[RMDB]
RNA sequence: GGGAACGACUCGAGUAGAGUCGAAAACAGGAGGUUAGCAUAGCUCCAUUCUACUAUGCAGCUAGUCGUCGUUUUCGACGUCUAGGAUAGACCACUACAGCAGGGUCGAUGAACUGCUGAUUACCGCGUCUCGUAGCGCGGGUUCUGGCUACGUACAAUUAUAAAUUAGCUUCGGCUAAUUUAUAAUAAAAGAAACAACAACAACAAC
Reactivity to 2A3 in 0.01 (KOAc 150mM, MgCl2 10mM, bicine 150mM(pH8.5), 24C), signal-to-noise 4, nucleotides 027 to 156: c040a010g020g010a010g020g020u130u130a020g000c010a010u000a010g000c010u000c040c010a080u170u080c040u070a070c010u020a020u030g000c020a000g020c010u000a000g020u020c010g000u000c030g030u020u040u180u300c020g020a000c000g000u000c000u000a010g020g000a030u080a060g020a040c020c020a050c070u170a090c040a020g010c000a000g020g030g010u060c100g060a070u160g070a020a020c000u000g000c000u010g020a130u030u130a060c010c000g000c000g070u010c050u050c130g070u120a040g000c010g000c010g020g000g000u040u090c040u060g050g000c030u050a020c060g050u040a030c050a060
Reactivity to DMS in 0.01 (KOAc 150mM, MgCl2 10mM, bicine 150mM(pH8.5), 24C), signal-to-noise 3, nucleotides 027 to 156: c040a150g010g010a090g010g010u010u000a140g020c000a010u010a010g000c010u000c090c300a150u010u000c020u040a030c000u000a000u000g010c020a300g020c010u000a030g010u000c010g030u000c020g000u000u000u000u020c030g010a000c010g020u000c010u000a040g010g010a160u010a100g000a080c020c020a080c040u010a170c010a030g020c010a030g030g010g000u000c040g000a160u010g010a040a070c000u010g000c010u000g010a140u010u000a040c000c010g020c010g020u000c060u000c300g020u010a110g010c000g050c010g010g010g010u000u000c040u000g020g020c030u000a080c050g050u010a100c090a100